[RMDB]
RNA sequence: GGGAACGACUCGAGUAGAGUCGAAAACGAGAUGAGUUCGCUCAUCUCGAAAGAACCGCGGGCGUGUCUCGGUCAGAGCAUGACAGGCGCUGCGGUCACGAAAAAGUGGUGUGUUCGCACACCACAACUGCUUAAAUCAGUUCGCUGAUUUAAGCAGAAAAGAAACAACAACAACAAC
Reactivity to 2A3 in 0.01 (KOAc 150mM, MgCl2 10mM, bicine 150mM(pH8.5), 24C), signal-to-noise 5, nucleotides 027 to 126: c010g000a000g010a000u000g000a010g040u060u110c160g080c090u000c000a010u000c000u000c000g000a000a030a010g030a050a010c000c000g000c020g000g040g010c100g060u060g040u030c030u080c150g080g040u130c070a050g030a050g200c130a090u100g010a000c000a010g100g020c090g000c130u020g010c000g010g000u000c020a060c070g130a140a040a010a030a040g000u000g000g000u010g000u000g010u010u030c100g050c080a000c000a000c000c000a000c010a010a000
Reactivity to DMS in 0.01 (KOAc 150mM, MgCl2 10mM, bicine 150mM(pH8.5), 24C), signal-to-noise 4, nucleotides 027 to 126: c020g020a020g010a010u000g010a020g000u000u030c200g020c010u000c000a020u000c000u000c000g000a020a090a120g010a110a030c000c000g010c010g000g010g030c010g000u000g010u000c020u010c140g010g030u010c140a090g020a160g000c180a090u000g000a010c020a070g000g010c000g010c010u000g000c000g000g010u000c020a040c170g000a070a060a050a090a110g010u000g000g010u000g020u000g010u000u010c200g010c000a010c000a000c000c010a000c000a000a050
An RNA of 177 nucleotides, treated with 2A3 and DMS and read out base by base. The reactions ran in a buffer of 150 mM KOAc, 10 mM MgCl2 and 150 mM bicine (pH 8.5), at 24 C. It was measured as part of the RMDB library M2PK50. For DMS, 5,466 sequencing reads were counted. The 2A3 profile rests on 11,810 reads.